[RMDB]
The record gives the reactivity of an RNA of 177 nucleotides to DMS and 2A3. For 2A3, 1,212 sequencing reads were counted. Source: RMDB library M2PK50, as collected in RNAgym. For DMS the reverse transcriptase was MarathonRT. Conditions: 150 mM KOAc, 10 mM MgCl2 and 150 mM bicine (pH 8.5), 24 C.
RNA sequence: GGGAACGACUCGAGUAGAGUCGAAAAGACGGAUUCUUCGGAAUCCGUCAAAGUGACGGUGAAAAAUGGCCAAUGCGGCAGCUACCACCGACACAGGGCGCAAAACUGGAGUGUUCGCACUCCAGAACUAGCCUAACUCGUUCGCGAGUUAGGCUAGAAAAGAAACAACAACAACAAC
Reactivity to DMS in 0.01 (KOAc 150mM, MgCl2 10mM, bicine 150mM(pH8.5), 24C), signal-to-noise 1, nucleotides 027 to 126: g000a000c000g020g000a000u010u000c000u000u010c130g020g000a000a020u000c000c010g030u000c000a000a020a010g020u020g020a090c000g010g010u000g010a020a030a040a200a300u000g000g020c000c020a100a140u010g030c170g000g030c010a050g030c080u010a130c150c000a000c030c000g010a110c010a030c020a160g010g000g020c100g020c130a000a070a130a130c010u010g000g010a020g000u000g010u000u010c300g000c000a010c000u000c000c000a020g010a030a050
Reactivity to 2A3 in 0.01 (KOAc 150mM, MgCl2 10mM, bicine 150mM(pH8.5), 24C), signal-to-noise 1, nucleotides 027 to 126: g010a000c000g000g000a000u010u000c030u050u120c260g070g000a000a020u000c000c000g000u000c000a010a000a000g000u010g000a020c010g010g000u020g040a010a050a020a100a190u110g020g020c000c020a070a230u300g100c130g020g000c030a040g000c000u030a020c030c000a000c000c000g000a000c000a000c000a010g010g050g060c050g040c110a000a060a080a060c000u000g010g000a010g000u000g030u080u100c200g000c030a010c000u000c000c000a000g000a000a000